[RMDB]
RNA sequence: GGGAACGACUCGAGUAGAGUCGAAAAGAUAUGGACCGUGAUGGCUAGCUUCGCUUUAUGUUAACAGUUGGUCGGAAACGACCAACUGUUAACAUAAAGCGAGCUUGGACCCAUACGGUCCUAAGUCCGUUAAGAUAAGGUUCGCCUUAUCUUAACGAAAAGAAACAACAACAACAAC
Reactivity to DMS in 0.01 (KOAc 150mM, MgCl2 10mM, bicine 150mM(pH8.5), 24C), signal-to-noise 4, nucleotides 027 to 126: g000a100u010a300u000g010g000a000c000c000g000u000g000a030u000g010g020c040u000a020g010c000u010u000c010g020c000u000u000u000a000u010g000u000u000a000a010c000a010g000u000u000g010g000u000c000g020g010a100a110a280c010g020a020c000c000a000a000c000u000g010u000u000a000a000c000a000u000a000a000a010g010c000g010a010g010c000u000u010g040g020a130c300c010c020a030u010a020c000g000g000u000c000c000u000a010a080g000u010c060
The data come from the RNA Mapping Database (RMDB), library TTRINS. This 177-nucleotide RNA was probed chemically with DMS. The RNA was probed in 150 mM KOAc, 10 mM MgCl2 and 150 mM bicine (pH 8.5) at 24 C. Reactivities are rounded to 0.1 and cut off at 0 and 3. Reactivities are given for positions 27 through 126.